[RMDB]
RNA sequence: GGGAACGACUCGAGUAGAGUCGAAAAGCCCCUCCCCGUGUCUAGUGAAGGGGGACUCCGGAACUCCUUGCAUGUUAGGGACGAAGCCGCCCCCGGGCGCUCCCCUCUGUCCACCUUCGAGGGGGUUAUGGCAUGGUCUUCGGACCAUGCAAAAGAAACAACAACAACAAC
Reactivity to DMS in 0.01 (KOAc 150mM, MgCl2 10mM, bicine 150mM(pH8.5), 24C), signal-to-noise 3, nucleotides 027 to 129: g000c000c000c000c000u020c000c010c010c050g010u070g020u050c050u040a110g040u020g040a230a080g000g060g010g000g010a110c000u030c150c080g020g000a060a160c110u010c030c000u030u010g020c040a000u060g050u000u000a130g010g000g060a040c140g030a100a050g020c100c000g020c100c020c000c030c090g060g020g000c140g030c060u060c000c000c000c000u050c000u000g020u050c000c030a130c000c030u080u050c000g020a080g000g000g000g000g000u040u040a050u040g010
Reactivity to 2A3 in 0.01 (KOAc 150mM, MgCl2 10mM, bicine 150mM(pH8.5), 24C), signal-to-noise 5, nucleotides 027 to 129: g040c000c010c000c030u020c000c000c000c000g060u030g080u050c040u060a060g050u040g180a000a050g030g000g000g020g010a010c000u030c060c040g040g050a090a060c020u020c010c000u050u070g060c020a080u090g060u170u180a040g020g010g020a000c050g090a090a010g020c040c020g000c020c010c020c000c000g000g000g000c040g000c020u080c000c040c000c000u010c030u020g050u040c010c040a050c020c060u120u100c030g010a090g000g000g000g000g000u040u090a110u180g040